[RMDB]
RNA sequence: GGGAACGACUCGAGUAGAGUCGAAAAAUAAAUAUCAGUUAUAUGACUGACGGAACGUGGAAUUAACCACAUGAAGUAUAACGAUGACAAUGCCGACCGUCUGGGCGUUGCAUCCGCUCCAAAAAAACAUAUUUGAUUUGUUCGCAAAUCAAAUAUGAAAAGAAACAACAACAACAAC
Reactivity to DMS in 0.01 (KOAc 150mM, MgCl2 10mM, bicine 150mM(pH8.5), 24C), signal-to-noise 3, nucleotides 027 to 126: a130u020a070a070a110u010a090u010c020a060g000u010u000a040u010a090u010g000a090c090u000g000a020c070g000g010a140a070c190g000u000g000g000a180a130u010u020a130a140c000c000a010c010a120u010g020a040a070g020u000a010u000a040a040c090g000a010u000g010a060c020a010a010u000g000c000c000g000a120c040c040g000u000c030u000g010g000g000c010g030u000u000g000c030a070u010c040c050g010c030u000c030c020a000a000a030a050a050a060a120
Reactivity to 2A3 in 0.01 (KOAc 150mM, MgCl2 10mM, bicine 150mM(pH8.5), 24C), signal-to-noise 3, nucleotides 027 to 126: a000u070a000a040a010u250a030u050c010a000g010u010u060a170u020a070u300g080a060c040u010g000a000c000g050g000a120a030c070g010u010g000g060a130a150u200u080a150a170c000c020a000c010a030u090g070a030a000g050u080a070u030a170a030c060g010a010u020g070a080c010a030a020u020g000c010c020g070a100c030c030g060u000c030u060g070g020g020c000g000u000u010g000c000a010u000c000c040g040c030u050c020c010a000a020a080a000a000a030a030
The record gives the reactivity of an RNA of 177 nucleotides to DMS and 2A3. Source: RMDB library M2PK90, as collected in RNAgym. The DMS profile rests on 3,087 reads. High DMS reactivity at an A or C suggests that its Watson-Crick edge is free.